[RMDB]
The record gives the reactivity of an RNA of 177 nucleotides to DMS.
RNA sequence: GGGAACGACUCGAGUAGAGUCGAAAAGAUAUGGAUGGCGAGAGACCUAUUACCCAAUUGGAUACUCGCAUUCGGAAACGAAUGACCCGAGUCCAAUUGGGUAAUAGGUGGAAUGCCAUCCUAAGUCCGAAUAAACUAGCUUCGGCUAGUUUAUUCGAAAAGAAACAACAACAACAAC
Reactivity to DMS in 0.01 (KOAc 150mM, MgCl2 10mM, bicine 150mM(pH8.5), 24C), signal-to-noise 3, nucleotides 027 to 126: g010a120u020a260u010g010g000a000u000g000g010c000g000a080g020a300g000a020c000c010u000a000u010u000a010c000c000c000a000a020u000u000g000g000a120u010a050c010u000c010g000c020a020u010u010c000g020g010a220a090a300c000g000a030a000u000g000a150c220c180c050g010a030g010u000c000c010a000a000u000u000g020g000g000u000a000a000u000a000g000g000u000g000g000a290a240u010g000c010c000a000u000c000c000u000a020a120g020u000c030

The DMS profile rests on 1,788 reads.